[RMDB]
Structure probing data (2A3) for a 207-nucleotide construct. Conditions: 150 mM KOAc, 10 mM MgCl2 and 150 mM bicine (pH 8.5), 24 C.
RNA sequence: GGGAACGACUCGAGUAGAGUCGAAAAUCAGCUCCCAGCGCUUCGAGGUGCGUCUGUGGUGGGAAGGGGUCGGCAGGGCUCAGGGUCUGCCCACACUCUCUCCUUUCAGUGUCCCUCCUCAUGGACCUUUUGGAGGUGGGAGGACAACUGACCCUGACCAAUACCGAGAGUUCGCUCUCGGUAUUGGAAAAGAAACAACAACAACAAC
Reactivity to 2A3 in 0.01 (KOAc 150mM, MgCl2 10mM, bicine 150mM(pH8.5), 24C), signal-to-noise 2, nucleotides 027 to 156: u150c040a020g040c030u020c010c010c030a000g070c080g010c040u140u120c110g070a020g000g060u060g010c020g060u050c030u040g110u070g020g080u100g020g030g030a060a080g070g000g000g000u070c070g030g000c030a030g000g000g010c030u010c030a010g000g020g060u010c020u050g090c030c040c000a030c000a020c020u120c000u000c000u010c040c020u030u150u160c150a020g010u080g020u230c020c010c020u070c000c040u080c030a070u090g000g000a000c010c000u030u120u160u050g020g000a010g070g000u030g030g000g000a000g010g010a020c010a110a010c070u020g010a010c010c000c000u000g000a010